[RMDB]
RNA sequence: GGGAACGACUCGAGUAGAGUCGAAAAGGGGUCCCAGCUUUGAUCUCCCUCACAGCGAAGAACAUACUGAAGCCUCCACGGUAUGGGAGCUGGAGGGAGGGAGCUGGGACGGAGGCACCCAAACGCUGUGCUUGAACUUCGGUUCAAGCACAGCGAACCGUGAUAGGCGUUUCGACGCCUAUCACGGAAAAGAAACAACAACAACAAC
Reactivity to 2A3 in 0.01 (KOAc 150mM, MgCl2 10mM, bicine 150mM(pH8.5), 24C), signal-to-noise 1, nucleotides 027 to 156: g020g000g040g050u030c000c000c000a000g030c000u300u210u050g030a010u010c000u000c000c000c000u000c010a300c030a090g000c020g230a300a020g010a010a030c000a010u000a000c000u020g030a140a030g000c000c000u000c000c000a000c010g000g000u000a000u000g000g000g020a010g030c000u000g010g000a000g000g000g010a000g010g010g000a010g000c000u000g000g010g000a000c020g010g000a000g000g040c000a020c040c010c000a050a160a000c000g010c000u000g000u010g010c000u000u000g000a010a000c010u050u140c300g070g020u010u000c000a000a010g000c010a000c000a000g000c000g010a010a010